[RMDB]
RNA sequence: GGGAACGACUCGAGUAGAGUCGAAAAACCUUUGUGACAUGAUACGCAAUUGUCAGCUCUGGAUAAGCUCCCAUUGGGAGCGUAACAGAGCUUGGAUUUAUUGCGUGUUUGUGUCACUCUGGUAAAAUCAUCGUCAGCUCUUCGGAGCUGACGAUGAGUGAUAUAGUUGGUUCGCCAACUAUAUCACAAAAGAAACAACAACAACAAC
Reactivity to DMS in 0.01 (KOAc 150mM, MgCl2 10mM, bicine 150mM(pH8.5), 24C), signal-to-noise 2, nucleotides 027 to 156: a090c010c010u000u000u010g000u010g020a030c000a010u010g010a020u000a000c010g050c000a010a030u000u000g010u000c010a090g020c000u010c020u010g000g000a180u000a140a280g000c020u000c010c000c000a300u010u010g040g040g000a020g020c010g010u000a040a300c010a030g020a020g000c000u000u010g020g010a070u000u030u000a020u000u000g020c000g030u000g000u000u010u010g060u000g000u000c010a000c000u000c010u000g000g010u010a060a050a120a250u010c020a010u000c020g020u000c010a020g020c010u000c010u000u010c300g030g020a000g030c000u010g000a000c020g030a000u010g000a010
Reactivity to 2A3 in 0.01 (KOAc 150mM, MgCl2 10mM, bicine 150mM(pH8.5), 24C), signal-to-noise 1, nucleotides 027 to 156: a000c000c000u000u010u010g000u000g000a000c000a000u010g010a010u030a010c000g000c000a000a010u020u010g010u010c000a000g000c000u000c020u000g020g010a020u010a020a000g000c000u010c000c000c050a210u180u300g000g000g000a000g000c000g000u020a020a020c010a010g000a000g000c000u000u010g010g000a010u090u290u220a020u070u000g000c000g000u010g010u010u010u090g010u000g000u000c010a000c000u000c000u000g010g010u060a090a060a040a130u040c000a000u000c000g000u000c000a010g000c010u010c020u050u180c290g100g000a000g000c020u000g000a000c000g000a000u000g000a000